[RMDB]
RNA sequence: GGGAACGACUCGAGUAGAGUCGAAAAAAAGUUAAAUUUGCUUUCCUGAGGUAAAAGGAGGAAAACUGCUAUCGUAUCCUACAUUGCCAUCACUAAAGAAUGGAAUGUUUUCUAUGAGUGGUCCAAGCAACUAUAUCUGCUUCGGCAGAUAUAGUUGAAAAGAAACAACAACAACAAC
Reactivity to 2A3 in 0.01 (KOAc 150mM, MgCl2 10mM, bicine 150mM(pH8.5), 24C), signal-to-noise 2, nucleotides 027 to 126: a000a000a000g100u130u050a130a280a300u220u280u190g050c000u030u030u010c000c000u060g030a060g020g040u100a070a070a060a040g030g000a040g030g070a050a030a020a060c070u070g040c050u090a050u190c040g070u050a090u070c000c020u000a000c000a010u010u120g110c000c000a010u070c010a020c090u140a180a090a030g080a050a080u020g020g000a030a030u040g080u000u060u050u050c060u070a100u160g060a010g000u030g000g050u000c010c000a030a010g030
Reactivity to DMS in 0.01 (KOAc 150mM, MgCl2 10mM, bicine 150mM(pH8.5), 24C), signal-to-noise 4, nucleotides 027 to 126: a020a030a020g020u020u010a080a080a190u000u010u010g000c020u000u010u000c010c000u010g010a090g010g010u010a040a050a090a090g010g000a080g010g010a040a030a080a060c070u010g010c070u000a080u000c060g010u000a090u000c050c040u000a050c040a060u000u000g010c000c010a020u000c050a260c210u000a080a050a070g000a080a030u000g010g000a050a050u000g010u000u010u010u000c090u000a070u010g000a050g010u000g000g020u010c050c060a060a120g010
This 177-nucleotide RNA was probed chemically with 2A3 and DMS. For DMS, 3,319 sequencing reads were counted. DMS adducts were read by reverse transcription with MarathonRT. The 2A3 profile rests on 1,278 reads. It was measured as part of the RMDB library OK2TRN. The reactions ran in a buffer of 150 mM KOAc, 10 mM MgCl2 and 150 mM bicine (pH 8.5), at 24 C.